RNA sequence: GGGAACGACUCGAGUAGAGUCGAAAAGACGUGCGUGGCUGUAUGUGGAGGGUGUUGUCCUGCUGUUGGUGGGCGCGUUGGUGCUCGUAUUGGUGUACAAGCAGUUUCGUGGGGAAUUCACGCCGAAAAGUGGUAUCAGUUUCGACUGAUACCACUUAAAAGAAACAACAACAACAAC
Reactivity to 2A3 in 0.01 (KOAc 150mM, MgCl2 10mM, bicine 150mM(pH8.5), 24C), signal-to-noise 4, nucleotides 027 to 126: g080a010c030g050u090g030c000g030u020g000g050c080u110g070u180a100u110g040u190g020g080a140g040g040g000u090g060u100u040g020u070c010c000u040g020c040u040g050u140u110g060g060u050g030g010g020c060g000c010g020u090u070g050g040u070g000c020u000c000g010u030a090u020u170g210g040u200g010u070a010c020a050a020g000c010a110g030u040u020u120c060g000u100g000g040g000g000a010a010u140u060c020a010c040g030c010c010g070a270a140
Reactivity to DMS in 0.01 (KOAc 150mM, MgCl2 10mM, bicine 150mM(pH8.5), 24C), signal-to-noise 4, nucleotides 027 to 126: g000a110c070g010u000g000c030g030u000g020g010c160u030g000u020a080u030g000u040g020g010a080g000g000g000u030g010u020u020g010u020c060c030u010g010c080u010g020u000u030g010g010u000g000g010g020c050g010c030g010u010u020g000g020u010g000c020u000c040g000u000a040u020u020g030g000u030g030u000a050c060a050a050g000c030a030g000u010u010u000c050g030u010g020g020g000g000a060a120u030u010c050a030c060g010c000c040g000a080a030
About this RNA: The record gives the reactivity of an RNA of 177 nucleotides to 2A3 and DMS. For 2A3, 1,637 sequencing reads were counted. In probing experiments dimethyl sulfate is read out at A N1 and C N3, which are open when not base-paired. For DMS the reverse transcriptase was MarathonRT. High 2A3 reactivity points to a flexible backbone, as in loops and unpaired stretches. Conditions: 150 mM KOAc, 10 mM MgCl2 and 150 mM bicine (pH 8.5), 24 C. For DMS, 11,252 sequencing reads were counted.